[RMDB]
RNA sequence: GGGAACGACUCGAGUAGAGUCGAAAAUUUCUUGUCCUAACCCACUCCCUUUUAGAGAGUAUAGGCCACAGACAGAAGGGGUGAGCAAUCUAGUAGGAUUACCUAAUAAUAUUUGCCUGCAAAAGACCUACUACUUUCUGUUCGCAGAAAGUAGUAGAAAAGAAACAACAACAACAAC
Reactivity to DMS in 0.01 (KOAc 150mM, MgCl2 10mM, bicine 150mM(pH8.5), 24C), signal-to-noise 5, nucleotides 027 to 126: u040u020u000c020u010u010g000u000c010c020u010a150a240c080c020c100a090c010u010c000c050c020u000u010u010u030a080g020a140g010a080g000u000a050u000a060g010g020c020c010a070c260a090g000a100c110a080g000a060a050g000g000g000g020u020g030a050g010c080a040a090u010c070u000a040g020u020a050g010g020a220u000u030a050c040c000u010a070a060u010a070a080u020a130u000u010u010g000c000c030u000g000c040a100a050a100a110g000a110c160
Reactivity to 2A3 in 0.01 (KOAc 150mM, MgCl2 10mM, bicine 150mM(pH8.5), 24C), signal-to-noise 9, nucleotides 027 to 126: u070u060u020c030u040u100g030u030c010c010u020a050a060c000c000c020a030c050u100c010c030c010u040u060u070u180a100g040a010g010a010g060u070a070u120a150g060g000c020c010a070c020a030g100a030c020a010g050a040a020g040g010g000g010u040g030a040g040c030a030a080u050c040u100a060g060u040a020g060g030a090u050u130a130c010c030u100a120a080u120a190a020u040a180u100u110u130g030c000c010u020g010c020a060a070a040a040g030a030c010
The record gives the reactivity of an RNA of 177 nucleotides to DMS and 2A3. 2A3 is a SHAPE reagent: it acylates the 2'-hydroxyl of flexible nucleotides of all four kinds. The DMS profile rests on 7,643 reads. The reactions ran in a buffer of 150 mM KOAc, 10 mM MgCl2 and 150 mM bicine (pH 8.5), at 24 C.